Structure probing data (2A3) for a 207-nucleotide construct.
2A3 adducts were read by reverse transcription with SuperScript II with manganese.
[RMDB]
RNA sequence: GGGAACGACUCGAGUAGAGUCGAAAACCGCGUUCGCGCGGGAAAACACCUUUGUGGCUGGAGGUCUGUGGAGAUGGUGCGUUCCCAUUGGGAACGUACCAUCUAUGAAGCAGACUCCCCACCCAGCCACUCUGGUUAAUCGGGACUUCGGUCCCAAGAUGGUUAGCAAGUUCGCUUGCUAACCAUCAAAAGAAACAACAACAACAAC
Reactivity to 2A3 in 0.01 (KOAc 150mM, MgCl2 10mM, bicine 150mM(pH8.5), 24C), signal-to-noise 1, nucleotides 027 to 156: c000c000g000c010g050u050u050c300g000c000g000c030g110g000g110a030a080a090a000c080a010c010c020u010u010u010g000u000g010g020c000u000g000g000a020g000g020u010c000u000g050u030g030g040a010g000a000u000g000g000u000g010c000g010u010u000c010c000c050a120u160u300g000g000g010a000a000c000g000u000a000c000c000a000u000c000u000a000u000g010a010a010g000c000a010g000a010c010u030c000c000c000c000a070c000c010c000a000g000c020c000a010c000u040c000u020g010g010u070u070a120a060u170c070g000g000g010a010c040u070u080c300g110g020u030c000c000c000a000a040